[RMDB]
Chemical mapping of a 177-nucleotide RNA with 2A3. Values cover nucleotides 27 to 126. Values are in units of 0.01, from 0 to 300, in steps of 10. The RNA was probed in 150 mM KOAc, 10 mM MgCl2 and 150 mM bicine (pH 8.5) at 24 C.
RNA sequence: GGGAACGACUCGAGUAGAGUCGAAAAGAAAGUGUGCACUUGAUACCGCGUGACUUCGGUCACGUAGUGGCACCGCGCAGGACUUUGCUGCCACUGCUUAGUCCUGCGGUAUCUUGUGCUCACGAAAGGACUAGGUCGACUUCGGUCGACCUAGUCCAAAAGAAACAACAACAACAAC
Reactivity to 2A3 in 0.01 (KOAc 150mM, MgCl2 10mM, bicine 150mM(pH8.5), 24C), signal-to-noise 1, nucleotides 027 to 126: g110a060a100a020g010u040g010u020g000c000a000c020u000u000g000a030u000a000c000c030g000c000g000u000g000a000c000u030u000c150g110g000u010c000a020c050g000u000a000g000u000g100g300c040a100c110c040g000c000g000c000a020g000g000a040c000u020u000u070g000c060u120g190c080c030a070c110u230g000c000u010u050a000g030u020c000c010u000g010c020g000g000u000a000u020c000u010u000g000u000g000c010u020c000a000c000g030a090a000a070